[RMDB]
RNA sequence: GGGAACGACUCGAGUAGAGUCGAAAAGAGUGUCGUUUUGGCAUUUUGGCGGAGAUUAGAGUAUACCUCAAUCUCAGUAUACGAUAGUUUUUCUAUCAAGUACUUUUGUACGCUUCGCCUAUUAUGAGGGUCUUACCAUGUUCGCAUGGUAAGACCCAAAAGAAACAACAACAACAAC
Reactivity to 2A3 in 0.01 (KOAc 150mM, MgCl2 10mM, bicine 150mM(pH8.5), 24C), signal-to-noise 1, nucleotides 027 to 126: g170a020g030u010g000u020c040g090u000u100u140u300g000g050c000a000u000u000u000u010g000g000c000g000g000a000g000a020u000u030a090g000a000g020u000a000u150a070c000c000u000c050a020a000u000c020u000c020a000g000u000a000u000a020c080g000a000u000a020g040u000u000u000u160u300c000u000a030u000c000a000a060g000u000a000c000u010u040u040u060g050u040a000c070g000c010u010u020c010g040c010c070u060a060u190u140a200u110g040a100